[RMDB]
The data come from the RNA Mapping Database (RMDB), library OK2TST.
Structure probing data (2A3 and DMS) for a 177-nucleotide construct.
For 2A3, 713 sequencing reads were counted.
RNA sequence: GGGAACGACUCGAGUAGAGUCGAAAAUGAACGAAACGGGAUGAUUGAUUUUGAUCUCGAUGACAACAUCCAUAAUGUGAGCUCUCAGACCGACGAAACAUUUGGGAGGUGGUGGAUUCAUCAAACGAAACACUGGGGUAUUCGUACCCCAGUGUUUAAAAGAAACAACAACAACAAC
Reactivity to 2A3 in 0.01 (KOAc 150mM, MgCl2 10mM, bicine 150mM(pH8.5), 24C), signal-to-noise 1, nucleotides 027 to 126: u020g020a040a030c040g030a080a020a020c040g010g050g000a030u050g050a020u050u210g080a100u080u120u100u120g120a110u030c030u040c040g040a070u090g010a000c000a090a000c000a110u080c020c010a030u070a030a040u120g080u020g060a040g030c000u000c000u000c040a000g070a170c060c020g100a070c020g040a020a070a070c010a040u030u070u080g030g000g010a090g000g000u040g000g050u000g010g070a070u000u140c040a080u060c010a060a130a060c040g160
Reactivity to DMS in 0.01 (KOAc 150mM, MgCl2 10mM, bicine 150mM(pH8.5), 24C), signal-to-noise 2, nucleotides 027 to 126: u020g030a160a070c090g010a040a070a120c070g010g000g000a050u000g000a050u000u000g010a190u000u000u000u000g010a030u000c040u000c110g000a070u010g000a130c110a070a060c040a050u000c020c030a050u010a040a040u000g020u000g010a160g000c070u010c030u030c020a050g010a080c100c040g030a090c070g020a130a060a060c060a060u000u000u000g000g010g040a100g000g000u000g000g000u020g000g000a140u000u000c040a050u000c110a040a070a090c190g000
The reactions ran in a buffer of 150 mM KOAc, 10 mM MgCl2 and 150 mM bicine (pH 8.5), at 24 C. Values cover nucleotides 27 to 126.